RNA sequence: GGGAACGACUCGAGUAGAGUCGAAAAUUGAAGAACCAGCAUCCGACACAUCAGCUUCAUGCGGCAGCUCGACAUGCCACAAUAUCGCAUGGUACAUCGGUGGCAGCGAUGAGCCAAAACCCCUGGAGGUGAGGGGCAAGUUCGCUUGCCCCUCACCAAAAGAAACAACAACAACAAC
Reactivity to 2A3 in 0.01 (KOAc 150mM, MgCl2 10mM, bicine 150mM(pH8.5), 24C), signal-to-noise 1, nucleotides 027 to 126: u210u090g010a010a010g030a010a020c030c000a000g010c000a020u120c000c000g050a000c000a000c000a110u190c070a070g040c040u120u150c010a090u120g000c130g140g000c000a000g020c020u000c000g130a070c000a030u030g020c000c000a000c030a000a130u030a080u300c020g000c180a060u130g170g000u250a050c140a080u070c020g250g000u100g010g050c000a000g000c000g040a050u010g000a000g040c000c000a000a050a050a140c030c000c000c000u000g100g000a010